[RMDB]
Conditions: 150 mM KOAc, 10 mM MgCl2 and 150 mM bicine (pH 8.5), 24 C. The record gives the reactivity of an RNA of 177 nucleotides to DMS and 2A3. The DMS profile rests on 1,193 reads. Reactivities are rounded to 0.1 and cut off at 0 and 3. For 2A3 the reverse transcriptase was SuperScript II with manganese. For DMS the reverse transcriptase was MarathonRT.
RNA sequence: GGGAACGACUCGAGUAGAGUCGAAAAGCGGUACACUUCGGUGUACCGCAAAACCGGAAUUAACAUGGGCCCAUGAGCCGAAACGGAAGGGCGUCCGCCCAAAAACGACGCCGUUCGCGGCGUCGAACUAUAAACUGCGGUUCGCCGCAGUUUAUAGAAAAGAAACAACAACAACAAC
Reactivity to DMS in 0.01 (KOAc 150mM, MgCl2 10mM, bicine 150mM(pH8.5), 24C), signal-to-noise 2, nucleotides 027 to 126: g010c000g020g020u010a020c020a020c000u000u020c130g050g010u020g030u000a000c000c000g000c000a010a000a050a160c050c030g000g000a050a120u010u010a050a040c110a130u010g000g020g010c020c010c040a100u040g000a120g030c020c010g030a040a120a170c030g010g010a070a060g030g000g010c010g000u010c080c070g000c010c000c040a060a050a030a160a160c010g000a020c000g060c000c030g020u000u000c160g010c000g010g000c040g000u000c000g020a030a040
Reactivity to 2A3 in 0.01 (KOAc 150mM, MgCl2 10mM, bicine 150mM(pH8.5), 24C), signal-to-noise 1, nucleotides 027 to 126: g000c020g010g010u020a000c000a000c020u020u120c220g080g000u000g000u010a000c020c000g000c000a000a000a000a000c030c000g030g090a080a130u140u080a110a040c090a150u110g010g020g000c040c010c010a140u230g060a020g090c000c020g050a240a150a030c050g000g040a070a020g080g080g000c000g040u110c140c050g050c000c020c030a110a050a030a000a030c000g000a000c030g000c020c000g000u040u030c210g010c000g060g020c010g000u010c000g000a000a010